Source: RMDB library OK3TST, as collected in RNAgym.
The record gives the reactivity of an RNA of 207 nucleotides to 2A3 and DMS.
For DMS the reverse transcriptase was MarathonRT.
Reactivities are rounded to 0.1 and cut off at 0 and 3.
The reactions ran in a buffer of 150 mM KOAc, 10 mM MgCl2 and 150 mM bicine (pH 8.5), at 24 C.
RNA sequence: GGGAACGACUCGAGUAGAGUCGAAAAAGGACAGAGUUCAGGGUUAGAUGACUCUGGUAACGGGAGCGGGCACGGAGGAGGACAGAGUGGCGGUAGCAUCUUUCCAGGUUUUCCAGGUCUAGCUGGAGGUCUUGGCGGCGAUGGCGGUCGACAGGGCUCCUGAAGGUAAAUUCGUUUACCUUCAGGAAAAAGAAACAACAACAACAAC
Reactivity to 2A3 in 0.01 (KOAc 150mM, MgCl2 10mM, bicine 150mM(pH8.5), 24C), signal-to-noise 2, nucleotides 027 to 156: a000g080g020a040c060a050g070a010g020u120u180c030a020g060g000g070u130u120a070g010a160u100g010a030c010u000c020u050g020g030u040a090a040c040g000g000g000a020g050c050g010g010g000c050a010c100g020g020a020g000g000a010g000g020a030c020a120g030a030g040u020g030g000c050g000g040u010a020g030c010a050u040c020u080u100u030c050c040a000g010g060u050u060u120u000c020c000a050g000g040u030c090u100a060g040c010u040g000g020a010g000g020u030c030u010u040g010g010c010g000g000c010g040a020u020g040g000c010g010g050u040c010g000a020c010a030g010g000g000c000
Reactivity to DMS in 0.01 (KOAc 150mM, MgCl2 10mM, bicine 150mM(pH8.5), 24C), signal-to-noise 2, nucleotides 027 to 156: a050g030g010a120c040a080g000a150g030u000u000c010a060g000g010g020u010u010a040g060a150u010g010a050c020u000c010u000g010g010u010a040a120c060g000g020g010a120g040c080g010g010g090c030a100c080g020g020a140g020g020a110g020g010a150c070a070g000a080g010u010g010g000c020g030g010u010a050g010c010a050u000c040u000u000u000c030c010a110g030g020u000u000u010u000c020c020a080g000g030u000c110u000a130g000c020u020g000g010a040g000g020u000c020u010u000g020g020c070g020g010c050g010a050u020g060g020c070g040g000u010c000g010a070c050a060g030g000g010c070
The 2A3 profile rests on 1,134 reads.
For 2A3 the reverse transcriptase was SuperScript II with manganese.